[RMDB]
RNA sequence: GGGAACGACUCGAGUAGAGUCGAAAAGAUGAGCAGGCUGAUAAUCUUGUGCAGUAUGCAUGCUCGUAACUCCAGCGCACAAGUGGAAGCACAAGAUUUGAAUCCAGCAUAGCGCAGGAGCCGCAGACGUCCUGCAUCGAUUCGUCGAUGCAGGACGAAAAGAAACAACAACAACAAC
Reactivity to 2A3 in 0.01 (KOAc 150mM, MgCl2 10mM, bicine 150mM(pH8.5), 24C), signal-to-noise 2, nucleotides 027 to 126: g150a040u080g010a020g010c050a050g080g000c000u030g020a190u060a120a040u030c030u010u080g000u000g000c000a050g180u270a030u160g030c080a050u090g000c000u000c000g010u030a030a000c000u000c010c020a010g010c000g000c000a030c050a190a040g050u030g040g010a040a110g000c010a000c000a000a000g010a000u070u130u130g140a060a020u020c020c000a000g060c050a020u110a070g000c000g000c030a030g000g060a030g000c000c010g070c060a100g030a090
Reactivity to DMS in 0.01 (KOAc 150mM, MgCl2 10mM, bicine 150mM(pH8.5), 24C), signal-to-noise 1, nucleotides 027 to 126: g000a060u070g000a020g070c000a000g010g010c040u020g000a130u000a060a020u000c000u000u000g000u000g020c020a230g000u000a040u000g000c040a090u010g000c000u000c000g000u000a060a100c060u000c040c040a140g000c100g030c060a150c170a030a070g000u000g010g010a060a250g000c000a040c030a000a060g000a090u000u050u040g000a300a170u050c000c060a130g000c140a030u020a050g010c000g000c020a060g000g000a020g000c030c030g010c140a150g000a200